[RMDB]
RNA sequence: GGGAACGACUCGAGUAGAGUCGAAAAGACGCGGGGGCUACAGCCCGGCCUCAGCGAGGUCCCCUCGGUAGGUGCCUUCCGCGUCACGGAGCGCCGUGACCGGGGGUAACCCUGGCCGGGCACAGGCUAUUGUAGAGACAUUCGUGUCUCUACAAUAAAAAGAAACAACAACAACAAC
Reactivity to 2A3 in 0.01 (KOAc 150mM, MgCl2 10mM, bicine 150mM(pH8.5), 24C), signal-to-noise 8, nucleotides 027 to 126: g050a010c030g010c030g030g010g000g010g010c020u070a060c080a040g010c010c000c000g000g000c000c010u100c070a050g080c050g060a080g000g040u070c010c010c000c010u030c010g040g040u070a050g000g020u020g010c010c030u220u210c020c000g020c080g020u020c000a010c010g000g010a090g100c160g050c030c020g040u070g090a020c000c000g000g010g000g000g000u020a040a040c000c010c010u020g010g000c000c000g000g000g000c010a010c010a010g020g000c000
Reactivity to DMS in 0.01 (KOAc 150mM, MgCl2 10mM, bicine 150mM(pH8.5), 24C), signal-to-noise 8, nucleotides 027 to 126: g000a090c050g010c090g000g000g010g000g010c050u010a080c200a170g000c010c000c020g000g000c000c000u020c140a090g010c160g000a080g000g000u010c180c010c000c010u000c010g000g000u000a080g000g010u000g000c050c040u010u030c000c020g010c170g000u030c100a020c030g000g010a180g010c120g010c010c000g020u020g000a010c000c000g000g000g000g000g010u010a030a030c040c010c050u010g000g000c000c000g000g000g010c040a030c110a060g000g010c080